Description:
An RNA of 177 nucleotides, treated with DMS and read out base by base. Conditions: 150 mM KOAc, 10 mM MgCl2 and 150 mM bicine (pH 8.5), 24 C.
RNA sequence: GGGAACGACUCGAGUAGAGUCGAAAAUCUGUUGAGAUGAUUAUACAGCUUUCUUCAUUCUGCCAGUGGAUUAUAUUGGUUUCAUUUUCAACUUUUAAACUAACUUUACAUCCCUGAGAUAAACCCCCAAUGAGGGAGGGUUCGCCCUCCCUCAUUGAAAAGAAACAACAACAACAAC
Reactivity to DMS in 0.01 (KOAc 150mM, MgCl2 10mM, bicine 150mM(pH8.5), 24C), signal-to-noise 1, nucleotides 027 to 126: u000c040u000g010u030u000g010a050g000a080u010g010a050u000u000a110u020a100c060a060g020c090u020u020u000c010u000u000c030a070u000u000c010u000g000c100c050a050g040u000g010g000a040u000u000a040u010a050u010u010g000g010u010u000u020c010a030u010u000u010u010c070a070a070c070u010u010u000u010a040a090a080c100u000a050a070c130u010u000u000a070c150a110u020c020c010c010u000g020a110g000a070u010a040a040a260c050c000c000c040